[RMDB]
RNA sequence: GGGAACGACUCGAGUAGAGUCGAAAAGAUAUGGAGCUCAAACGACGCCAGAAUAUGGUCUGUGAUGUGGUCGGAAACGACCAUGCAUGGCCAUAUUCUGGAACUACGUCUAUGAGCUCCUAAGUCACAAAGUAAAAGUCUUCGGACUUUUACUUUGAAAAGAAACAACAACAACAAC
Reactivity to 2A3 in 0.01 (KOAc 150mM, MgCl2 10mM, bicine 150mM(pH8.5), 24C), signal-to-noise 1, nucleotides 027 to 126: g040a000u080a070u300g000g000a030g050c000u000c010a070a080a050c300g020a000c020g000c000c000a000g000a020a000u020a020u030g010g060u050c080u090g030u090g160a300u120g070u000g010g000u010c000g030g020a040a140a120c010g010a000c010c050a000u010g000c010a020u020g000g040c000c000a000u000a000u000u000c000u000g000g000a000a010c010u060a000c000g010u020c000u000a030u010g020a000g010c000u020c000c000u000a000a000g010u010c000a000
Reactivity to DMS in 0.01 (KOAc 150mM, MgCl2 10mM, bicine 150mM(pH8.5), 24C), signal-to-noise 4, nucleotides 027 to 126: g010a040u000a300u020g000g000a020g000c010u000c000a020a050a300c300g000a020c010g020c000c000a000g020a020a000u000a000u000g000g010u010c000u030g070u010g000a120u010g070u000g000g020u000c000g010g000a090a130a240c000g020a010c010c000a010u000g000c000a010u000g000g000c000c000a000u000a000u000u000c000u000g000g010a010a010c130u020a300c030g000u000c010u000a300u010g010a010g000c000u000c000c000u000a010a070g010u000c040a300
Source: RMDB library TTRINS, as collected in RNAgym. The record gives the reactivity of an RNA of 177 nucleotides to 2A3 and DMS. For DMS, 3,285 sequencing reads were counted. Conditions: 150 mM KOAc, 10 mM MgCl2 and 150 mM bicine (pH 8.5), 24 C. For 2A3 the reverse transcriptase was SuperScript II with manganese.